[RMDB]
RNA sequence: GGGAACGACUCGAGUAGAGUCGAAAAGGCAUCAACCGCUCUGAGGUGAUCAAGAUGUUGCCUCAGCAUCUCAAGAUCGCCAUCUAUGGCUGCCUGCAUAAGAGGCGUUACGGGGUGGCCUGGGUGGUAGACGUGGUAAAUUCGUUUACCACGUCUAAAAAGAAACAACAACAACAAC
Reactivity to 2A3 in 0.01 (KOAc 150mM, MgCl2 10mM, bicine 150mM(pH8.5), 24C), signal-to-noise 5, nucleotides 027 to 126: g030g000c010a090u040c040a090a080c000c020g010c030u030c040u040g030a030g030g010u030g020a020u060c090a090a110g040a130u140g030u090u040g020c000c010u020c000a010g000c010a070u010c020u010c040a030a050g040a130u080c030g000c010c020a050u010c020u060a080u170g010g000c000u010g010c010c000u050g050c030a070u130a160a090g050a040g110g070c040g050u060u080a060c080g050g010g000g010u020g000g000c000c000u010g010g000g000u010g000g020
Reactivity to DMS in 0.01 (KOAc 150mM, MgCl2 10mM, bicine 150mM(pH8.5), 24C), signal-to-noise 6, nucleotides 027 to 126: g010g010c060a060u000c120a100a090c130c070g020c090u000c050u010g020a080g000g010u000g010a020u000c080a150a100g010a060u010g010u000u000g000c010c030u000c020a130g010c140a030u000c000u000c090a120a170g010a060u000c090g010c000c010a030u000c050u000a060u010g010g000c030u010g010c010c000u000g000c090a110u010a070a090g020a090g000g000c070g020u000u010a080c160g010g000g000g030u000g000g000c000c010u000g010g000g030u000g000g010

Chemical mapping of a 177-nucleotide RNA with 2A3 and DMS. For 2A3, 8,820 sequencing reads were counted. The RNA was probed in 150 mM KOAc, 10 mM MgCl2 and 150 mM bicine (pH 8.5) at 24 C.